[RMDB]
RNA sequence: GGGAACGACUCGAGUAGAGUCGAAAAGAUAUGGAGAUCAUCUUCUUUUGACGCUCCUGUAUCGGAAACGAUACUGGAGCGAUAAGAAGGUCUCCUAAGUCAAAACUAGUCGCUUCGGCGACUAGAAGCAUGUAGUAACCUUCGGGUUACUACAUGCAAAAGAAACAACAACAACAAC
Reactivity to DMS in 0.01 (KOAc 150mM, MgCl2 10mM, bicine 150mM(pH8.5), 24C), signal-to-noise 1, nucleotides 027 to 126: g010a030u000a020u000g000g000a020g010a020u020c080a220u000c110u000u000c060u010u000u010u010g040a300c040g040c000u010c000c000u000g000u000a010u010c010g000g010a000a000a070c000g000a010u000a000c000u000g010g000a000g010c000g000a000u010a000a030g010a050a010g050g000u000c000u000c000c000u000a000a170g000u000c000a120a100a120a300c000u000a000g020u000c000g030c000u000u010c200g010g040c000g050a020c000u010a000g000a100a200
Reactivity to 2A3 in 0.01 (KOAc 150mM, MgCl2 10mM, bicine 150mM(pH8.5), 24C), signal-to-noise 2, nucleotides 027 to 126: g000a020u040a020u070g020g010a000g010a020u030c020a120u020c080u060u000c050u210u300u210u300g300a300c160g010c000u010c010c020u000g000u000a020u020c000g000g040a030a000a000c010g000a010u000a020c030u030g020g000a010g000c010g010a010u000a010a010g000a040a020g020g000u000c000u030c000c000u030a010a000g010u000c000a000a000a190a250c000u000a000g000u000c000g000c080u050u070c300g170g000c000g030a000c000u000a010g000a010a030
Description:
Source: RMDB library TTRDES, as collected in RNAgym. The record gives the reactivity of an RNA of 177 nucleotides to DMS and 2A3. The 2A3 profile rests on 3,492 reads. 2A3 adducts were read by reverse transcription with SuperScript II with manganese. The reactions ran in a buffer of 150 mM KOAc, 10 mM MgCl2 and 150 mM bicine (pH 8.5), at 24 C.